This 207-nucleotide RNA was probed chemically with 2A3 and DMS. 2A3 adducts were read by reverse transcription with SuperScript II with manganese. For 2A3, 921 sequencing reads were counted.

RNA sequence: GGGAACGACUCGAGUAGAGUCGAAAAUGGACCCAAGCCCUGCAUCCCCACAUGCGGGGCAGAGGCCCUUCUCUCCGCCAAAUGUCUACACAGUAUACACAGGACAUCGUUGCUGCCGCCGUGACUGGUUUUCUGUCCCCAAGAACGUGACGUUCGAGGAUCACGAUUAUUUCGAUAAUCGUGAUCCAAAAGAAACAACAACAACAAC
Reactivity to 2A3 in 0.01 (KOAc 150mM, MgCl2 10mM, bicine 150mM(pH8.5), 24C), signal-to-noise 1, nucleotides 027 to 156: u030g010g010a010c000c000c040a000a090g000c000c000c000u000g010c000a060u070c090c030c020c020a060c000a030u000g000c010g040g010g010g000c020a010g000a010g010g020c000c000c000u030u030c020u000c010u000c010c030g070c010c020a060a000a100u130g020u020c020u090a040c090a000c030a060g050u150a140u170a130c160a000c000a070g050g040a040c000a020u030c060g050u040u150g000c060u050g070c040c000g020c040c010g030u030g070a090c060u060g000g050u060u000u000u050c000u070g070u020c000c000c000c010a050a060g060a040a040c050g020u090g130a040c090g020u010u010c040g010a080
Reactivity to DMS in 0.01 (KOAc 150mM, MgCl2 10mM, bicine 150mM(pH8.5), 24C), signal-to-noise 1, nucleotides 027 to 156: u000g030g010a050c020c000c030a130a300g000c000c000c010u000g000c000a040u000c060c030c150c140a240c140a050u000g000c010g000g030g060g020c040a010g000a150g060g010c010c000c020u000u000c030u000c000u000c030c020g170c060c040a060a030a080u010g000u000c040u020a090c070a140c040a070g030u000a140u000a080c040a160c050a080g020g010a060c020a070u000c060g060u000u000g000c010u010g000c020c000g020c060c010g000u000g000a100c080u000g000g000u000u010u000u010c030u000g020u000c010c000c000c030a080a130g020a040a020c000g000u000g010a100c060g000u000u000c020g000a300